[RMDB]
Annotation:
Chemical mapping of a 207-nucleotide RNA with 2A3 and DMS. For 2A3 the reverse transcriptase was SuperScript II with manganese. The data come from the RNA Mapping Database (RMDB), library M2RFPK. The RNA was probed in 150 mM KOAc, 10 mM MgCl2 and 150 mM bicine (pH 8.5) at 24 C. Values cover nucleotides 27 to 156.
RNA sequence: GGGAACGACUCGAGUAGAGUCGAAAAGACAGCGCCCAACGCUUCACAACCUGAAAGAAGCGCCUGUUAUCAGGACGGUUGAUCCAUUUACCGGUGCAGACCUCUGCAAACACCGGGUAGCAGAACAUAGAGGGAAAUUUGUUCGCAAAUUUCCCAACAAGUAUAAAAUCUUCGGAUUUUAUACUUGAAAAGAAACAACAACAACAAC
Reactivity to 2A3 in 0.01 (KOAc 150mM, MgCl2 10mM, bicine 150mM(pH8.5), 24C), signal-to-noise 2, nucleotides 027 to 156: g100a020c060a020g040c040g080c030c000c000a060a020c020g000c000u020u000c000a050c000a100a000c000c000u000g000a010a030a000g000a000a000g000c010g060c010c000u100g030u160u210a170u300c010a000g010g020a010c050g000g010u000u000g010a090u040c050c020a040u050u120u160a090c000c010g010g000u000g000c030a030g100a300c020c110u200c020u070g040c050a080a110a000c030a010c010c000g000g020g010u030a040g030c110a030g050a180a060c050a060u240a100g100a180g030g000g000a010a000a000u000u000u000g010u020u010c020g000c060a000a000a000u000u000u010c000c000c000a000a000
Reactivity to DMS in 0.01 (KOAc 150mM, MgCl2 10mM, bicine 150mM(pH8.5), 24C), signal-to-noise 1, nucleotides 027 to 156: g000a120c060a010g040c070g000c040c090c010a020a140c040g050c000u020u000c030a150c070a110a160c070c080u000g030a120a130a260g000a050a060g000c000g020c010c060u000g010u000u010a100u060c060a110g000g010a080c040g010g080u010u000g010a100u010c050c040a120u010u010u000a080c000c000g010g000u000g020c010a170g010a080c120c070u010c050u030g010c010a190a180a050c030a040c000c000g000g040g000u000a040g030c090a110g000a090a130c040a130u010a090g010a190g010g010g010a040a050a090u000u000u010g000u000u010c240g040c010a030a030a060u000u000u000c000c000c000a010a040